[RMDB]
RNA sequence: GGGAACGACUCGAGUAGAGUCGAAAAAGCGACCAGUACGCUGGUCGCAACGUAUGUUUGUCCACGAUAGGCCCCGGAAACUUAUUGUUUGUCAAACAGAAGAAAACGCCUGACUACGGUCAGGCGACCAGCCGAUGAUGUUCGCAUCAUCGGCUGGAAAAGAAACAACAACAACAAC
Reactivity to 2A3 in 0.01 (KOAc 150mM, MgCl2 10mM, bicine 150mM(pH8.5), 24C), signal-to-noise 1, nucleotides 027 to 126: a000g000c020g000a010c000c000a000g000u050a060c290g000c090u030g000g000u000c000g030c020a000a000c010g010u030a000u020g030u000u030u030g000u030c000c000a000c010g000a000u000a080g030g000c020c000c060c040g210g220a130a060a010c080u100u020a050u050u060g040u020u000u180g060u050c000a000a000a010c000a080g020a230a000g040a100a190a000a040c000g000c000c030u040g020a030c000u000a030c170g040g000u000c000a000g010g000c020g000a000